Annotation: Structure probing data (2A3 and DMS) for a 177-nucleotide construct. The RNA was probed in 150 mM KOAc, 10 mM MgCl2 and 150 mM bicine (pH 8.5) at 24 C. The data come from the RNA Mapping Database (RMDB), libraries RFM100 and RFMREP. Values cover nucleotides 27 to 126. High 2A3 reactivity points to a flexible backbone, as in loops and unpaired stretches.
[RMDB]
RNA sequence: GGGAACGACUCGAGUAGAGUCGAAAAAGAGAUUUGCAGAACAACACAACAUGCAUUGCGUGUUUGUGGAGUUUAGCAUAUUACUUUGAGUUAAUCGGCGUGUUCCACGCAGGCUUUUGUCUUGAACAUAUUUAGGUAGCUUCGGCUACCUAAAUAUAAAAGAAACAACAACAACAAC
Reactivity to 2A3 in 0.01 (KOAc 150mM, MgCl2 10mM, bicine 150mM(pH8.5), 24C), signal-to-noise 6, nucleotides 027 to 126: a000g080a000g000a010u020u010u030g020c050a030g030a050a000c010a000a000c010a010c000a000a000c000a000u010g040c060a130u140u300g010c020g010u010g050u080u140u130g000u010g000g000a020g000u000u000u000a030g000c000a010u020a030u040u060a100c030u040u050u120g060a090g070u100u240a110a100u170c070g080g000c020g010u050g070u170u030c090c010a020c020g030c050a020g030g050c050u050u120u080u150g100u070c050u050u080g060a100a040c060
Reactivity to DMS in 0.01 (KOAc 150mM, MgCl2 10mM, bicine 150mM(pH8.5), 24C), signal-to-noise 9, nucleotides 027 to 126: a010g010a300g020a040u000u000u000g010c010a300g010a010a010c010a020a260c000a000c000a010a010c000a010u000g010c010a210u010u040g010c010g020u000g000u010u010u020g030u000g000g010a260g010u000u000u010a100g010c010a010u000a010u000u010a110c010u000u000u010g010a150g000u030u030a090a090u030c060g000g010c010g000u010g000u020u000c080c010a110c040g010c020a080g010g000c140u000u000u010u010g010u010c010u020u000g000a090a120c190